[RMDB]
RNA sequence: GGGAACGACUCGAGUAGAGUCGAAAAGUAAAAGCUUACCAAGCUGGUUGUUACAAAUCAUGGGCAUAAGCUUCUAAUGAACAUAGUCUUUGCUGCCCUAGUAUAGUUGGCAUUCACACAGCAAUGAGUCGAUACUAGCUUUCGAGCUAGUAUCGACAAAAGAAACAACAACAACAAC
Reactivity to DMS in 0.01 (KOAc 150mM, MgCl2 10mM, bicine 150mM(pH8.5), 24C), signal-to-noise 1, nucleotides 027 to 126: g000u050a020a100a090a040g020c020u000u010a140c050c050a160a070g000c030u000g000g030u010u010g030u010u020a100c120a090a070a050u010c000a050u000g040g010g020c100a050u010a040a010g000c080u000u010c080u020a090a060u010g000a090a040c090a030u010a090g020u000c020u000u000u000g040c120u000g030c000c000c000u000a070g020u000a050u010a100g020u020u000g000g000c090a060u000u000c150a040c100a060c160a000g030c040a030a030u000g010a200